[RMDB]
RNA sequence: GGGAACGACUCGAGUAGAGUCGAAAAGUGUUCGAGGACCUGAGCGAGAUUCGAGACGCCAUCAACUACGGCACGUAGAUGAACCGUCGGUCGCACAAACUGCCGUUCCACAAGUUCGAGCAACAGGUUCGCUACAAAGCGACAUGGAACCAGAUUCACUGGAAUUCGUAUUCGUACGAAUUCCAGUAAAAGAAACAACAACAACAAC
Reactivity to DMS in 0.01 (KOAc 150mM, MgCl2 10mM, bicine 150mM(pH8.5), 24C), signal-to-noise 3, nucleotides 027 to 156: g010u000g010u010u000c060g000a150g030g010a050c030c030u010g010a280g020c010g000a090g010a140u010u000c030g010a220g010a050c030g040c020c050a120u010c060a090a070c050u000a120c020g020g040c090a100c130g030u000a100g010a090u000g020a070a080c150c010g020u000c060g010g000u000c010g000c070a080c050a090a060a090c050u000g010c040c010g010u000u010c050c010a130c120a110a110g010u000u000c030g020a180g020c030a060a120c010a040g010g020u000u000c010g000c010u000a130c140a080a080a100g010c010g020a040c010a080u000g000g010a100a090c020c010a100g000a300u000u000c040
Reactivity to 2A3 in 0.01 (KOAc 150mM, MgCl2 10mM, bicine 150mM(pH8.5), 24C), signal-to-noise 5, nucleotides 027 to 156: g030u020g040u060u090c040g040a090g000g040a030c010c020u070g000a050g020c030g030a050g010a090u090u150c060g030a060g050a100c030g050c070c000a100u060c010a050a120c040u110a040c050g140g000c150a030c180g030u040a020g000a100u060g040a060a090c100c010g030u030c040g040g020u000c020g020c030a060c060a020a150a020c040u040g070c060c000g010u010u000c060c000a110c070a120a030g030u040u060c020g030a030g080c040a020a070c000a020g030g060u040u020c010g000c020u060a100c090a080a180a000g030c030g000a010c020a040u040g020g010a000a020c020c010a030g020a170u160u190c110
Source: RMDB library OK3TST, as collected in RNAgym. Chemical mapping of a 207-nucleotide RNA with DMS and 2A3. Reactivities are given for positions 27 through 156. Conditions: 150 mM KOAc, 10 mM MgCl2 and 150 mM bicine (pH 8.5), 24 C. For 2A3, 2,929 sequencing reads were counted. 2A3 adducts were read by reverse transcription with SuperScript II with manganese.